Structure probing data (DMS and 2A3) for a 177-nucleotide construct.
DMS adducts were read by reverse transcription with MarathonRT.
Source: RMDB library OK2TRN, as collected in RNAgym.

RNA sequence: GGGAACGACUCGAGUAGAGUCGAAAAGAAGGUCGGCGAGCAGCCCAGGUGGGUGCAGAUGCCGACGAUCACCGCCAGUUCCGGCUUGAUCGAGCGAAGCUUGGGAUCGACGUACUCCGGCUGCUCACGAGCAUCGGCUAUUCGUAGCCGAUGCUCGAAAAGAAACAACAACAACAAC
Reactivity to DMS in 0.01 (KOAc 150mM, MgCl2 10mM, bicine 150mM(pH8.5), 24C), signal-to-noise 1, nucleotides 027 to 126: g000a130a110g000g000u000c000g020g030c090g000a160g010c000a020g000c010c040c140a140g020g010u010g020g000g000u000g030c040a050g020a160u000g010c010c010g000a080c010g000a000u000c010a040c030c090g020c020c020a240g010u000u000c110c120g020g000c000u000u000g000a040u020c010g000a070g020c050g000a160a120g020c090u000u000g040g020g000a040u000c050g000a150c180g000u000a010c040u000c030c150g010g040c010u010g010c000u000c010a150
Reactivity to 2A3 in 0.01 (KOAc 150mM, MgCl2 10mM, bicine 150mM(pH8.5), 24C), signal-to-noise 1, nucleotides 027 to 126: g080a060a070g110g080u010c030g010g080c160g030a070g000c020a030g090c000c020c100a050g010g240u300g110g000g010u030g000c030a050g010a190u140g070c000c000g030a010c000g000a000u000c000a010c020c100g000c040c030a090g020u180u160c040c020g000g040c000u040u060g030a030u020c040g020a010g030c100g080a260a000g080c080u120u180g010g040g020a020u130c110g070a110c060g060u180a030c010u000c030c000g030g000c020u010g000c010u000c010a040
2A3 adducts were read by reverse transcription with SuperScript II with manganese. Reactivities are given for positions 27 through 126.